[RMDB]
RNA sequence: GGGAACGACUCGAGUAGAGUCGAAAACCAACCGCCUUCGGGCGGUUGGGAUGACAGUCGCGAGGAAAGUCCGGGCUGACUGUCCACGACUGAACCCGGCUUAAAUCUAUCGCUUCGGCGAUAGAAACACACACAUGCGAUUCGUCGCAUGUGUGUGAAAAGAAACAACAACAACAAC
Reactivity to DMS in 0.01 (KOAc 150mM, MgCl2 10mM, bicine 150mM(pH8.5), 24C), signal-to-noise 1, nucleotides 027 to 126: c000c000a030a000c000c000g030c000c020u010u000c150g030g040g050c010g000g000u020u000g000g000g000a100u020g000a130c010a000g010u010c010g010c080g000a130g000g000a080a080a060g000u000c010c060g010g010g010c110u010g020a030c030u000g000u000c030c020a070c120g000a050c000u020g010a130a160c030c010c000g000g000c120u000u000a040a080a140u020c000u000a000u000c000g000c000u000u000c200g030g010c000g020a000u000a000g000a000a060a130
Reactivity to 2A3 in 0.01 (KOAc 150mM, MgCl2 10mM, bicine 150mM(pH8.5), 24C), signal-to-noise 1, nucleotides 027 to 126: c010c000a010a000c000c010g070c110c010u110u110c240g200g000g000c070g020g030u000u020g010g040g010a040u070g000a010c010a010g000u010c010g080c090g210a110g020g090a060a030a030g020u010c090c070g140g050g000c140u100g000a020c030u020g020u060c010c000a100c000g050a020c050u080g000a010a020c000c010c000g000g060c030u020u120a000a120a080u000c000u010a030u000c000g020c030u000u080c240g100g020c010g000a010u000a000g020a010a080a000